[RMDB]
RNA sequence: GGGAACGACUCGAGUAGAGUCGAAAAGAUAUGGAUCGUCGUAGCUAGACGCUACUCGGAAACGAGUAGGCGUCUUGGACCUAUAACGAUCCUAAGUCAAACUCGAGAUGGUUCGCCAUCUCGAGAACACCGCACUACUCUUCGGAGUAGUGCGGUGAAAAGAAACAACAACAACAAC
Reactivity to DMS in 0.01 (KOAc 150mM, MgCl2 10mM, bicine 150mM(pH8.5), 24C), signal-to-noise 1, nucleotides 027 to 126: g000a030u000a300u000g000g000a010u000c000g010u000c050g040u000a000g010c040u000a080g050a040c010g000c000u000a030c020u000c000g020g010a100a090a190c030g020a000g020u000a020g030g000c020g000u000c000u000u000g030g000a170c300c010u000a020u000a020a010c000g020a030u000c000c000u000a000a100g000u000c070a210a240a300c000u000c000g020a010g000a030u000g020g000u000u000c300g010c000c000a020u030c000u000c000g000a020g000a100a080
This 177-nucleotide RNA was probed chemically with DMS.
Reactivities are given for positions 27 through 126.
The DMS profile rests on 774 reads.
Reactivities are rounded to 0.1 and cut off at 0 and 3.
The reactions ran in a buffer of 150 mM KOAc, 10 mM MgCl2 and 150 mM bicine (pH 8.5), at 24 C.